Chemical mapping of a 177-nucleotide RNA with DMS.

RNA sequence: GGGAACGACUCGAGUAGAGUCGAAAACAGGGUAGGGACCUUCACCGCGGGGCUGGGUCUCAGGAGCUGCCGGGCGCCCUUCUCCAGCCCGCCUUUGUGAUAAGGGACAGAAUCGGGGUCACUGGCACCUUCCGUGACCUUUCGAGGUCACGGAAGGAAAAGAAACAACAACAACAAC
Reactivity to DMS in 0.01 (KOAc 150mM, MgCl2 10mM, bicine 150mM(pH8.5), 24C), signal-to-noise 1, nucleotides 027 to 126: c090a140g000g010g000u030a180g010g020g010a090c070c020u000u000c110a050c090c180g020c110g010g010g020g020c050u010g030g010g000u000c150u090c140a050g000g000a170g010c090u000g080c060c030g010g040g020c220g020c050c020c020u000u000c030u000c010c010a070g030c020c000c010g000c000c000u000u000u030g030u000g000a110u000a060a080g000g010g000a110c240a160g000a010a070u000c080g000g000g000g010u000c090a090c060u000g000g000c130a150
The RNA was probed in 150 mM KOAc, 10 mM MgCl2 and 150 mM bicine (pH 8.5) at 24 C.
Source: RMDB library OK2TST, as collected in RNAgym.